[RMDB]
RNA sequence: GGGAACGACUCGAGUAGAGUCGAAAAGGUUCUAGUGUAGCUGACAGUCGUCGAUCAUCAACGCCGAUCAGAGGAGGGAAGAGAGCAUAUAUUGGCAAGCGGAAAGCAAAGGCAGAACCGGAAGCGAGUGAUGUCGAGGGCGAGGACGAGGCAUUCAGUAACGCGCUUCGUUCGCGAAGCGCGUUACAAAAGAAACAACAACAACAAC
Reactivity to 2A3 in 0.01 (KOAc 150mM, MgCl2 10mM, bicine 150mM(pH8.5), 24C), signal-to-noise 1, nucleotides 027 to 156: g140g000u070u040c060u030a070g050u030g020u090a010g000c040u060g060a060c020a040g030u010c010g000u040c010g000a030u040c030a010u030c030a010a120c120g000c050c030g110a120u040c100a030g060a060g060g020a020g000g020g020a020a140g040a010g000a030g090c000a100u210a000u010a080u120u140g040g020c040a100a000g070c070g000g000a010a030a030g010c000a000a000a120g010g010c080a010g020a090a040c000c000g000g070a080a000g030c000g000a010g090u080g000a000u000g000u040c000g000a100g020g050g040c040g060a020g010g010a010c030g010a060g030g010c070a110u120u060c010a090